[RMDB]
RNA sequence: GGGAACGACUCGAGUAGAGUCGAAAAGAAAAGACGAUGUUAUUAUGAUUCUCGAGUAAUAGCAGGUCACGCGUACUACUCGCCGAACGGAAGGCUGACUGUUCGCGAAAUGAAACGAGCAAGAAAACGGAUAUGCAUACUUCGGUAUGCAUAUCCGAAAAGAAACAACAACAACAAC
Reactivity to DMS in 0.01 (KOAc 150mM, MgCl2 10mM, bicine 150mM(pH8.5), 24C), signal-to-noise 2, nucleotides 027 to 126: g020a030a110a220a260g000a030c000g000a110u000g000u000u000a050u010u000a000u010g000a200u000u000c030u140c060g100a180g050u000a000a000u050a000g000c020a000g020g020u000c070a130c170g000c050g000u020a100c110u060a080c160u000c000g000c030c040g060a030a000c170g030g040a100a150g020g000c040u000g000a140c010u000g030u000u000c050g000c010g020a000a060a100u050g000a080a060a080c050g040a040g010c110a060a050g040a140a070a230a270
Reactivity to 2A3 in 0.01 (KOAc 150mM, MgCl2 10mM, bicine 150mM(pH8.5), 24C), signal-to-noise 2, nucleotides 027 to 126: g070a000a080a000a000g050a000c050g030a110u000g000u020u000a020u000u000a050u020g080a210u150u200c090u050c090g080a020g010u020a000a000u000a000g000c020a020g000g060u020c090a020c080g040c010g040u000a000c020u020a020c020u020c040g080c030c000g010a120a060c040g110g110a090a100g050g000c080u100g050a070c000u040g020u060u040c020g000c000g040a050a050a220u110g020a000a000a090c060g000a000g000c040a140a020g100a160a070a000a000
Source: RMDB library OK1LIB, as collected in RNAgym. Chemical mapping of a 177-nucleotide RNA with DMS and 2A3. The reactions ran in a buffer of 150 mM KOAc, 10 mM MgCl2 and 150 mM bicine (pH 8.5), at 24 C. For 2A3 the reverse transcriptase was SuperScript II with manganese. DMS adducts were read by reverse transcription with MarathonRT. For 2A3, 1,404 sequencing reads were counted.